[RMDB]
RNA sequence: GGGAACGACUCGAGUAGAGUCGAAAAUUUGCAUCUAUAACACGAUGGGAAAGAAAGAAAAGAAGCCAUCUGCCUUUGGCACUGCGAAAGGUUCACGCACCAUCUGGUAUAUGUGGCUGGGUAGCCGCACAAGUCAUGGCUUCGGCCAUGACUUGUGAAAAGAAACAACAACAACAAC
Reactivity to DMS in 0.01 (KOAc 150mM, MgCl2 10mM, bicine 150mM(pH8.5), 24C), signal-to-noise 2, nucleotides 027 to 126: u000u000u000g020c030a060u000c020u010a040u000a100a040c180a110c150g000a040u000g020g000g000a050a050a090g020a100a130a080g010a110a030a140a090g000a130a060g000c000c050a030u010c110u030g000c010c030u000u000u000g000g000c110a080c190u000g010c000g000a060a110a060g010g010u000u010c070a030c100g010c090a100c030c020a040u000c030u000g000g000u000a060u000a010u000g000u000g010g020c030u000g010g000g010u020a090g010c010c030g000
Reactivity to 2A3 in 0.01 (KOAc 150mM, MgCl2 10mM, bicine 150mM(pH8.5), 24C), signal-to-noise 1, nucleotides 027 to 126: u050u050u060g030c000a040u000c040u040a080u000a130a050c040a050c120g060a010u010g020g110g090a030a140a030g140a040a130a020g110a030a000a120a070g110a050a020g000c020c010a040u030c070u080g020c020c000u030u060u060g010g000c060a030c250u180g000c000g020a000a160a070g120g030u040u050c070a030c050g030c020a000c020c000a000u040c030u000g060g000u040a150u000a010u140g100u020g040g030c030u070g050g000g250u070a000g020c020c000g000